[RMDB]
RNA sequence: GGGAACGACUCGAGUAGAGUCGAAAAGGAGCUCGAUGUUAGAUGGUCUCGUAACCCAAUGGGACCACCACUGUUGGGUUACCGAGUGGUAUCAACAUAGUGUUAUGUUGAUAUCUAACAUCGAGGAGAUAGGAUUCUUAUUCGUGAGAGUUCUAUCAAAAGAAACAACAACAACAAC
Reactivity to DMS in 0.01 (KOAc 150mM, MgCl2 10mM, bicine 150mM(pH8.5), 24C), signal-to-noise 7, nucleotides 027 to 126: g010g010a130g010c000u000c010g000a010u000g000u000u000a000g000a030u010g000g000u010c000u000c000g000u000a030a040c010c000c000a030a020u000g000g010g010a070c050c040a030c070c040a060c000u000g020u010u010g010g000g010u010u020a030c070c060g010a010g000u000g010g020u020a070u000c000a000a010c000a000u000a020g020u060g020u050u010a010u000g000u000u000g000a010u000a010u000c000u000a000a010c010a010u000c000g000a010g000g000a080
Reactivity to 2A3 in 0.01 (KOAc 150mM, MgCl2 10mM, bicine 150mM(pH8.5), 24C), signal-to-noise 9, nucleotides 027 to 126: g160g020a080g060c000u000c000g000a000u000g000u000u000a010g000a050u060g070g100u040c000u000c000g020u020a040a040c000c000c000a000a000u030g010g000g070a070c030c030a020c010c010a040c020u040g070u140u080g010g000g000u070u060a070c060c060g000a000g000u040g040g050u070a010u010c000a000a000c010a000u020a020g300u270g140u300u050a030u000g000u000u000g000a000u000a010u020c000u000a000a000c000a000u000c000g000a000g000g000a010

The record gives the reactivity of an RNA of 177 nucleotides to DMS and 2A3. DMS adducts were read by reverse transcription with MarathonRT. The reactions ran in a buffer of 150 mM KOAc, 10 mM MgCl2 and 150 mM bicine (pH 8.5), at 24 C. Source: RMDB library OK1LIB, as collected in RNAgym. For 2A3 the reverse transcriptase was SuperScript II with manganese.